The record gives the reactivity of an RNA of 177 nucleotides to 2A3 and DMS. The 2A3 profile rests on 19,603 reads. For DMS the reverse transcriptase was MarathonRT. The RNA was probed in 150 mM KOAc, 10 mM MgCl2 and 150 mM bicine (pH 8.5) at 24 C.
[RMDB]
RNA sequence: GGGAACGACUCGAGUAGAGUCGAAAACGCGCUGGAGCUGACCGCCGCUUAACUGCGGUGGGCGUUUGUCUAGAACGCUGUCAUCGAGAUCGACCGCCUUCAGCAUUUCGCUGGCGCGCGCCAGUUGAAGUUGAUUCAUAUUCGUAUGAAUCAACUUAAAAGAAACAACAACAACAAC
Reactivity to 2A3 in 0.01 (KOAc 150mM, MgCl2 10mM, bicine 150mM(pH8.5), 24C), signal-to-noise 7, nucleotides 027 to 126: c040g030c000g000c010u020g020g020a010g000c020u020g060a050c010c000g000c000c010g000c020u090u090a100a050c300u120g000c000g010g000u010g000g010g000c010g010u010u030u030g080u030c070u070a090g010a050a000c020g010c060u050g060u050c020a080u120c080g140a090g040a190u120c080g010a040c010c020g010c010c000u020u020c010a010g000c020a040u060u140u090c050g000c010u020g020g000c050g010c050g040c060g010c060c010a040g010u070u180g120
Reactivity to DMS in 0.01 (KOAc 150mM, MgCl2 10mM, bicine 150mM(pH8.5), 24C), signal-to-noise 9, nucleotides 027 to 126: c060g010c110g020c010u000g000g000a070g010c050u000g010a170c160c020g010c010c010g010c010u000u000a090a130c170u000g010c000g020g020u000g000g010g010c010g010u000u000u000g010u010c160u010a140g010a020a030c040g010c020u010g010u000c030a120u000c100g010a140g010a100u010c100g010a050c040c060g000c180c030u000u000c020a030g000c030a170u000u000u010c120g010c010u000g000g000c020g010c160g020c130g010c010c000a050g010u000u010g010